[RMDB]
RNA sequence: GGGAACGACUCGAGUAGAGUCGAAAAGGGGAGUGGCUGUCAUGAGCAUGUCAGUUCUAAAAGGGGUUUUCAUUAUCCUGGAAAUGUAUAAACUAAAGUAAGCUGAUUGGCUUUGCAAACAUGUUCAUUUGUUUUUCAGACAGUAUGGGUUAAGUUAAUAGGUAGUGGAUUUCGAUCCACUACCUAUAAAAGAAACAACAACAACAAC
Reactivity to 2A3 in 0.01 (KOAc 150mM, MgCl2 10mM, bicine 150mM(pH8.5), 24C), signal-to-noise 1, nucleotides 027 to 156: g040g000g010g000a020g000u100g040g000c010u030g000u080c010a020u100g000a000g040c000a010u000g020u040c040a020g030u000u050c100u200a020a070a030a120g050g000g020g000u140u060u000u000c020a040u020u150a040u050c010c040u080g080g000a040a070a090u110g010u050a080u040a210a070a010c010u040a040a000a080g130u030a020a020g010c010u010g090a220u170u190g030g020c050u020u050u170g000c070a020a090a070c020a060u010g000u000u060c000a050u090u040u080g090u010u050u000u080u110c020a010g010a060c010a040g010u080a010u050g000g040g000u060u050a070a060g000u010u090a080
Reactivity to DMS in 0.01 (KOAc 150mM, MgCl2 10mM, bicine 150mM(pH8.5), 24C), signal-to-noise 1, nucleotides 027 to 156: g040g010g000g030a070g020u030g030g040c010u040g000u000c090a070u000g000a090g060c010a070u000g020u010c030a090g060u000u000c050u000a090a070a110a140g010g030g010g020u000u000u030u000c050a110u010u000a030u010c010c040u020g010g000a010a080a050u000g010u010a130u000a090a040a090c060u000a050a060a120g000u000a030a040g000c020u010g010a150u000u000g030g000c000u010u000u000g040c100a120a060a040c020a050u000g000u020u010c030a040u000u000u000g010u020u000u000u050u020c090a180g010a020c020a030g010u000a080u000g000g000g000u000u000a100a060g040u000u000a090